Chemical mapping of a 177-nucleotide RNA with 2A3.
For 2A3 the reverse transcriptase was SuperScript II with manganese.
The RNA was probed in 150 mM KOAc, 10 mM MgCl2 and 150 mM bicine (pH 8.5) at 24 C.
[RMDB]
RNA sequence: GGGAACGACUCGAGUAGAGUCGAAAAACAAGGUCAACAGCAUCGCCUCCUCGAUCAUCACCGUGUUCCAAGGGCAAGGCGCCACCAUCAACGACAUCCUCGACCAGACCGCCUCGCUGACGGCAACGAAGCGCAGAGCGUUCGCGCUCUGCGCUUCAAAAGAAACAACAACAACAAC
Reactivity to 2A3 in 0.01 (KOAc 150mM, MgCl2 10mM, bicine 150mM(pH8.5), 24C), signal-to-noise 2, nucleotides 027 to 126: a020c070a030a020g030g000u050c010a040a040c000a100g060c000a040u030c010g000c020c060u070c030c020u020c020g010a100u040c000a080u080c000a000c070c070g010u030g000u110u000c080c060a080a060g110g000g000c030a060a040g080g040c050g030c010c000a050c030c010a030u080c100a130a040c010g050a000c000a070u000c010c000u000c030g010a050c060c000a000g000a080c000c000g050c050c000u050c070g020c020u030g000a070c070g000g000c020a020a050c020
It was measured as part of the RMDB library OK1LIB.